Structure probing data (DMS and 2A3) for a 177-nucleotide construct. DMS adducts were read by reverse transcription with MarathonRT. Source: RMDB libraries RFM100 and RFMREP, as collected in RNAgym. The reactions ran in a buffer of 150 mM KOAc, 10 mM MgCl2 and 150 mM bicine (pH 8.5), at 24 C.
[RMDB]
RNA sequence: GGGAACGACUCGAGUAGAGUCGAAAAGCCUGCAGUGCUGGCAGCCUCUUUGGGCACCAGACAUGAAAUUCAACAGCAACCGCCAGUAGAUUAAACCAAUUGAACGUCUGAAGCUGUGGUGCCGGCAACAAGGGAGUAUGUUCGCAUACUCCCUUGUAAAAGAAACAACAACAACAAC
Reactivity to DMS in 0.01 (KOAc 150mM, MgCl2 10mM, bicine 150mM(pH8.5), 24C), signal-to-noise 4, nucleotides 027 to 126: g010c010c000u010g030c180a090g020u020g000c010u000g000g010c040a120g010c010c000u020c150u010u030u040g000g000g020c000a240c040c020a040g010a080c060a070u000g010a080a080a100u020u010c040a080a070c050a050g000c030a070a170c090c210g010c010c020a050g010u020a090g000a080u000u020a080a100a150c150c090a080a070u010u010g000a040a090c200g020u020c050u010g000a110a110g010c070u000g040u000g010g020u000g010c030c040g010g010c040a100
Reactivity to 2A3 in 0.01 (KOAc 150mM, MgCl2 10mM, bicine 150mM(pH8.5), 24C), signal-to-noise 4, nucleotides 027 to 126: g040c000c000u020g040c060a040g030u020g040c000u010g010g010c030a100g040c030c000u120c070u100u150u240g030g000g000c000a000c020c020a000g030a100c010a010u120g040a040a060a050u110u060c060a070a040c000a030g020c020a030a020c020c010g010c020c030a030g030u060a040g010a060u050u120a110a120a080c040c040a040a050u030u080g020a060a020c010g030u010c060u060g050a040a010g010c030u040g010u060g050g010u010g010c000c030g000g000c020a050